RNA sequence: GGGAACGACUCGAGUAGAGUCGAAAACAUACGGGCUACUUCUAGAGUGUAUCCGUCAUUCUCAGCCGUGGGUCUAACGCAUCGCGAAGGGCAUCCGCAAAUAAAUUAGCGGCUAGGACUAAUCCAACAUAGGAGUAAUCUUCGGAUUACUCCUAUGAAAAGAAACAACAACAACAAC
Reactivity to DMS in 0.01 (KOAc 150mM, MgCl2 10mM, bicine 150mM(pH8.5), 24C), signal-to-noise 6, nucleotides 027 to 126: c170a110u000a070c050g010g010g000c110u020a020c050u010u000c120u010a110g010a090g020u000g010u000a060u000c030c010g010u020c130a090u000u000c010u000c050a100g010c030c030g030u000g010g010g010u000c030u010a050a220c090g010c030a070u000c140g020c040g010a070a160g010g000g010c030a060u000c030c030g010c050a040a080a120u000a040a080a110u020u010a150g020c020g000g000c130u000a070g000g000a060c090u000a060a080u000c030c030a070a210
Reactivity to 2A3 in 0.01 (KOAc 150mM, MgCl2 10mM, bicine 150mM(pH8.5), 24C), signal-to-noise 2, nucleotides 027 to 126: c020a000u250a080c020g020g000g050c020u070a000c000u140u100c050u120a060g030a030g150u070g030u050a090u040c010c020g000u000c010a080u090u000c030u020c020a010g000c010c000g040u070g050g020g000u000c030u050a060a000c020g000c060a100u140c060g000c010g040a050a010g030g020g000c000a060u050c030c040g000c050a050a130a050u150a080a130a030u090u080a040g020c000g030g000c020u030a020g020g040a010c020u060a120a060u080c080c030a030a040